[RMDB]
RNA sequence: GGGAACGACUCGAGUAGAGUCGAAAAACAGUCAGUACGCUGACUGAGGGAAACGGGAGCCGGGCUCGGGACAAGAGCCAUCCCAAGUCCAAGGCCAAGUAGGCUCUAGUGAUGGUACGCCAUCACAAAAACUGGUCUACCUUCGGGUAGACCAGAACAAUCUCCUCAUGUUCGCAUGAGGAGAUUGAAAAGAAACAACAACAACAAC
Reactivity to 2A3 in 0.01 (KOAc 150mM, MgCl2 10mM, bicine 150mM(pH8.5), 24C), signal-to-noise 3, nucleotides 027 to 156: a010c010a000g010u010c000a010g010u050a050c190g020c090u010g010a010c000u000g000a070g030g050g040a080a130a110c160g050g040g050a050g060c040c050g010g000g000c010u010c030g020g000g010a020c030a060a050g010a000g000c000c000a010u010c000c000c000a000a000g000u000c020c030a130a120g010g000c040c030a110a050g060u100a120g130g000c000u030c020u030a030g000u000g000a000u010g000g030u050a040c290g020c030c000a000u010c000a000c000a000a060a000a000a000c010u010g000g000u000c000u000a010c000c010u040u090c200g050g000g000u000a000g000a000c000c000a000g000a000a010
Chemical mapping of a 207-nucleotide RNA with 2A3. Conditions: 150 mM KOAc, 10 mM MgCl2 and 150 mM bicine (pH 8.5), 24 C. It was measured as part of the RMDB library M2RFPK.